[RMDB]
RNA sequence: GGGAACGACUCGAGUAGAGUCGAAAACGUUACAACAGCUGCCGUGCUGCGGCAGCCAGAGGCGAUAUCGACUGGCUGAACGACGACAUCCGGGCGUUGAUGAUCGACGCCGACGACUACACCGUGAACCUGACGUCGCACACGACGUUGGCGAACAUACUAAAAGACUGUUCGCAGUCUUUUAGUAAAAAGAAACAACAACAACAAC
Reactivity to DMS in 0.01 (KOAc 150mM, MgCl2 10mM, bicine 150mM(pH8.5), 24C), signal-to-noise 2, nucleotides 027 to 156: c030g000u000u010a140c050a110a190c060a050g020c010u000g010c030c010g000u000g050c300u020g030c050g020g020c000a040g040c020c010a020g000a210g050g000c030g000a130u010a040u000c030g040a060c010u000g010g080c010u000g010a120a150c030g020a070c010g010a110c090a120u030c040c040g000g020g000c030g000u000u000g030a110u000g000a180u000c010g030a020c000g070c020c000g000a030c020g020a110c050u000a170c040a090c050c030g000u000g010a130a090c050c010u000g000a020c000g000u010c010g040c120a140c200a160c000g000a100c000g000u000u000g020g000c060g000a040a190c090a230
Reactivity to 2A3 in 0.01 (KOAc 150mM, MgCl2 10mM, bicine 150mM(pH8.5), 24C), signal-to-noise 1, nucleotides 027 to 156: c020g040u080u100a070c030a140a010c010a040g000c000u010g000c000c010g090u100g080c100u170g000c010g010g000c010a000g000c000c010a010g020a050g020g000c030g020a060u060a040u240c030g040a060c030u030g020g010c020u040g100a090a060c060g050a010c030g020a020c020a080u060c070c010g040g010g000c020g030u010u020g040a130u130g030a110u210c040g010a010c030g000c030c000g020a020c040g000a000c020u120a030c040a030c040c080g060u050g040a020a030c010c000u010g020a020c000g000u000c000g000c050a040c020a020c130g010a000c000g000u000u010g000g020c030g010a070a010c000a040

Background:
An RNA of 207 nucleotides, treated with DMS and 2A3 and read out base by base. DMS adducts were read by reverse transcription with MarathonRT. The 2A3 profile rests on 1,770 reads. In probing experiments dimethyl sulfate is read out at A N1 and C N3, which are open when not base-paired. The RNA was probed in 150 mM KOAc, 10 mM MgCl2 and 150 mM bicine (pH 8.5) at 24 C.